Source: RMDB library OK1LIB, as collected in RNAgym. An RNA of 177 nucleotides, treated with 2A3 and read out base by base. For 2A3, 814 sequencing reads were counted. Values are in units of 0.01, from 0 to 300, in steps of 10.

RNA sequence: GGGAACGACUCGAGUAGAGUCGAAAAAUAUGUCAGUGGUCCCUGUAAGAGGAUCUAGGACAUAGGGAGGGUGGGUCAGAGCGCGGAUGCCCUAGAUCACGCGCGCGAGAAGUUAUGGGAACCACUAGACUGAUCCAUCGUUCGCGGUGGGUCGGUCAAAAGAAACAACAACAACAAC
Reactivity to 2A3 in 0.01 (KOAc 150mM, MgCl2 10mM, bicine 150mM(pH8.5), 24C), signal-to-noise 1, nucleotides 027 to 126: a000u220a000u190g080u040c080a030g080u020g030g010u010c000c020c000u030g190u120a090a040g040a120g200g030a010u000c030u060a020g120g000a020c010a030u040a000g000g070g090a240g140g090g200u300g020g010g020u050c050a010g050a010g120c040g000c050g070g010a020u060g020c020c000c020u020a020g020a060u050c050a060c150g060c010g000c020g020c080g020a120g080a230a110g000u230u300a060u270g000g000g000a120a150c000c000a010c000u000a050